[RMDB]
RNA sequence: GGGAACGACUCGAGUAGAGUCGAAAAGCCAUGAGUCGCAACGCAAAGCCGCGGCAAGUGGAGUUAGUGAGAAGAGACUAGGCUUUGGUUUCUUCAAGUGAAGCGGUCACCAAUCAGGUGUGGUAGUAGGAGCCUGCAUGGUUCGCCAUGCAGGCAAUCCUUAAACCGGAUUCGUCCGGUUUAAGGAAAAAGAAACAACAACAACAAC
Reactivity to DMS in 0.01 (KOAc 150mM, MgCl2 10mM, bicine 150mM(pH8.5), 24C), signal-to-noise 2, nucleotides 027 to 156: g000c000c000a040u000g000a300g000u000c010g030c000a000a050c020g020c030a170a170a300g020c000c040g020c000g000g010c050a080a270g000u010g010g010a080g010u000u000a080g000u000g000a200g020a050a040g000a070g060a010c010u000a090g050g010c040u000u010u010g050g000u000u000u000c030u000u000c010a030a300g010u010g010a040a060g000c070g000g040u000c020a090c060c000a050a120u000c120a040g020g000u000g000u000g030g010u010a090g000u010a130g000g010a120g000c000c000u000g010c000a040u010g030g050u000u010c290g020c030c000a030u000g020c000a010g000g000c010a010a020
Reactivity to 2A3 in 0.01 (KOAc 150mM, MgCl2 10mM, bicine 150mM(pH8.5), 24C), signal-to-noise 1, nucleotides 027 to 156: g040c000c010a030u030g000a010g030u000c000g020c020a080a020c050g050c030a090a170a040g040c030c030g000c010g000g020c010a030a010g030u020g060g040a030g040u130u110a050g010u080g120a100g000a080a010g020a000g010a000c030u030a060g070g050c080u090u100u080g020g000u000u020u010c000u050u050c050a090a040g040u030g090a060a000g060c020g040g050u030c000a010c020c020a020a120u150c070a100g030g020u050g030u080g020g070u090a090g010u030a030g100g160a000g050c000c010u010g000c010a000u000g000g000u030u030c010g050c020c000a010u020g000c050a010g000g000c000a000a000
An RNA of 207 nucleotides, treated with DMS and 2A3 and read out base by base.
2A3 adducts were read by reverse transcription with SuperScript II with manganese.
The RNA was probed in 150 mM KOAc, 10 mM MgCl2 and 150 mM bicine (pH 8.5) at 24 C.